[RMDB]
RNA sequence: GGGAACGACUCGAGUAGAGUCGAAAAGAUAUGGAUCGCCAUAAACGCGAAGAACUAACUCGGAAACGAGUUAGGGAGCGUGUGGGCGAUCCUAAGUCAAAGACGGCAUCGUUCGCGAUGCCGUCAACAAUUAACUCUCCUUCGGGAGAGUUAAUUGAAAAGAAACAACAACAACAAC
Reactivity to DMS in 0.01 (KOAc 150mM, MgCl2 10mM, bicine 150mM(pH8.5), 24C), signal-to-noise 4, nucleotides 027 to 126: g010a030u000a180u010g000g000a010u000c000g030c010c000a110u010a070a180a050c010g060c000g010a110a160g010a140a280c000u000a000a000c000u000c000g010g000a050a020a090c000g000a030g010u000u000a000g000g000g000a040g030c000g040u010g010u010g020g010g030c000g000a000u000c000c000u000a000a070g000u000c010a110a110a150g000a020c000g010g000c000a010u000c010g030u000u010c280g020c000g010a010u000g010c010c000g010u000c000a030a060
Reactivity to 2A3 in 0.01 (KOAc 150mM, MgCl2 10mM, bicine 150mM(pH8.5), 24C), signal-to-noise 3, nucleotides 027 to 126: g000a000u030a000u020g010g000a000u000c000g020c010c020a120u220a220a300a050c020g030c010g300a300a050g000a020a000c000u000a000a000c000u000c000g020g000a010a020a010c010g000a010g010u000u000a010g000g000g000a000g030c040g000u080g130u150g180g070g010c000g010a000u010c000c000u000a000a000g010u010c020a000a110a250g010a000c000g000g000c020a000u010c010g090u150u100c270g020c000g150a010u010g000c010c000g000u000c000a000a000

Background: An RNA of 177 nucleotides, treated with DMS and 2A3 and read out base by base. Conditions: 150 mM KOAc, 10 mM MgCl2 and 150 mM bicine (pH 8.5), 24 C. The 2A3 profile rests on 6,980 reads. Source: RMDB library TTRDES, as collected in RNAgym. The DMS profile rests on 7,665 reads.